[RMDB]
RNA sequence: GGGAACGACUCGAGUAGAGUCGAAAAGGGCGAAAGCGGGAAAGUAAGGGAGUACGAAACCGCGAAAGAUCGAAAGAUUCCCUGAUCGAAAGAUCGAAAGCCCGAAAGCCGGAAACGGCGAAAGAAAGGCAUAUGAUUAGUUCGCUAAUCAUAUGCCAAAAGAAACAACAACAACAAC
Reactivity to 2A3 in 0.01 (KOAc 150mM, MgCl2 10mM, bicine 150mM(pH8.5), 24C), signal-to-noise 4, nucleotides 027 to 126: g020g010g000c030g070a090a020a020g020c020g030g010g020a160a170a010g010u020a030a030g130g080g030a090g130u020a000c020g040a230a020a010c020c000g000c000g020a030a010a000g030a030u080c070g040a150a000a000g060a020u020u030c010c000c000u010g010a000u040c010g050a100a080a010g000a000u010c000g050a080a050a000g000c000c000c000g050a080a030a010g000c000c000g000g000a050a030a030c010g000g010c020g010a020a040a000g100a050a040a000
Reactivity to DMS in 0.01 (KOAc 150mM, MgCl2 10mM, bicine 150mM(pH8.5), 24C), signal-to-noise 5, nucleotides 027 to 126: g010g010g000c010g010a050a100a150g010c000g010g010g020a060a100a190g020u000a030a150g020g030g020a160g030u000a020c010g010a080a120a170c000c010g000c010g000a050a070a070g000a020u010c010g010a110a100a100g000a030u000u010c010c000c020u020g010a040u000c020g000a120a070a140g000a000u000c000g000a080a080a190g030c000c010c000g010a030a090a090g000c000c010g010g020a090a110a120c000g010g000c000g000a070a100a060g000a080a140a130